[RMDB]
RNA sequence: GGGAACGACUCGAGUAGAGUCGAAAAAAAUCGCGCAUAUAGGGCGAGUGCCGGAACCGCUGGAGAUAAUUGCGCGACAGAAGCCUGACCUUGUCUGCAGCGCCAAGCUUUGCCGCAAUCGGCAAGAUAUUUAAUUAUGAUUCGUCAUAAUUAAAUAAAAAGAAACAACAACAACAAC
Reactivity to DMS in 0.01 (KOAc 150mM, MgCl2 10mM, bicine 150mM(pH8.5), 24C), signal-to-noise 6, nucleotides 027 to 126: a060a070a100u000c010g010c010g010c010a060u000a140u010a130g010g000g010c020g000a110g020u000g010c050c040g010g010a110a120c150c030g010c020u000g000g010a080g000a080u000a040a100u010u000g010c020g010c000g000a030c080a070g000a100a080g010c020c030u000g010a090c090c030u000u000g010u000c020u000g010c080a070g010c040g010c190c080a060a080g000c090u000u000u010g010c030c010g010c230a090a130u000c070g010g000c020a020a020g000a170
Reactivity to 2A3 in 0.01 (KOAc 150mM, MgCl2 10mM, bicine 150mM(pH8.5), 24C), signal-to-noise 3, nucleotides 027 to 126: a010a010a030u030c010g000c000g000c040a010u120a020u120a160g070g020g000c020g030a120g070u100g030c060c030g070g010a070a060c030c010g000c030u030g080g100a080g020a080u070a080a050u190u050g000c010g000c030g010a000c000a020g170a080a030g060c020c030u050g050a070c000c010u030u050g020u020c010u040g010c020a000g030c020g000c040c010a070a020g030c050u080u080u110g010c020c020g030c080a050a100u190c020g010g000c000a010a010g020a010
Structure probing data (DMS and 2A3) for a 177-nucleotide construct. Reactivities are given for positions 27 through 126. The data come from the RNA Mapping Database (RMDB), library OK2TST. DMS adducts were read by reverse transcription with MarathonRT. For 2A3, 4,242 sequencing reads were counted. Conditions: 150 mM KOAc, 10 mM MgCl2 and 150 mM bicine (pH 8.5), 24 C.